[RMDB]
RNA sequence: GGGAACGACUCGAGUAGAGUCGAAAAGCAAAUUGUAUAUUAUUGACAUCGACCGCGUAAUAUAGUAGAGUUAUCGAUCAUAUCUAUAUCAUCCAUGUACUUGCUUAGUAUAUCAAAUACAUCUAUCAGUAUGGUUUCAUAACAGUGAUACCCGCAAGGAAUGUGACUACUUCGGUAGUCACAUUCCAAAAGAAACAACAACAACAAC
Reactivity to 2A3 in 0.01 (KOAc 150mM, MgCl2 10mM, bicine 150mM(pH8.5), 24C), signal-to-noise 2, nucleotides 027 to 156: g050c040a050a070a090u240u080g110u040a120u030a040u120u070a100u020u200g030a010c020a080u050c050g110a100c070c040g000c030g000u060a160a200u100a080u010a040g070u030a030g030a010g050u010u090a070u140c020g050a020u050c030a030u080a040u060c060u030a070u000a000u240c060a010u000c010c010a010u050g040u030a010c000u000u050g040c010u040u010a000g040u020a040u040a050u180c080a050a060a000u060a040c000a040u000c090u120a060u110c000a030g060u070a040u060g010g050u000u000u060c120a110u080a200a070c020a040g000u030g040a030u020a070c030c000c020g040c030a030a020